RNA sequence: GGGAACGACUCGAGUAGAGUCGAAAAUUCGUGAUCCGGAAGGCUUCCGGGUCUUACCGCUUACUGCAUGAUUUGCGCGCUGUUAACGCCAAGCUUGUUCCUUUUGGGGCCGUCCAACAGGGGGCGCGGUGUCUUCUAAGUUCGCUUAGAAGACACCAAAAGAAACAACAACAACAAC
Reactivity to 2A3 in 0.01 (KOAc 150mM, MgCl2 10mM, bicine 150mM(pH8.5), 24C), signal-to-noise 6, nucleotides 027 to 126: u170u130c060g010u050g010a000u020c000c000g020g020a020a050g250g030c130u080u010c000c000g000g000g000u000c000u000u030a040c010c000g030c070u030u110a090c030u100g050c020a080u130g020a200u160u060u150g030c040g000c010g000c010u060g050u220u080a090a020c050g010c010c050a040a010g020c040u030u060g020u040u080c020c000u020u070u040u120g030g000g030g030c030c030g040u030c010c020a070a050c030a120g100g000g000g010g000c020g000c010
Reactivity to DMS in 0.01 (KOAc 150mM, MgCl2 10mM, bicine 150mM(pH8.5), 24C), signal-to-noise 2, nucleotides 027 to 126: u000u020c110g020u010g010a030u000c000c030g020g010a070a120g010g050c220u000u010c000c020g000g000g000u000c000u000u030a040c080c050g030c070u000u000a080c050u000g000c080a010u040g030a140u010u000u000g000c060g010c150g000c040u000g010u000u020a100a090c160g010c010c030a030a060g030c070u000u000g020u000u000c010c010u000u030u020u010g000g000g000g000c070c070g000u010c010c090a060a100c200a080g010g010g030g040g000c040g000c100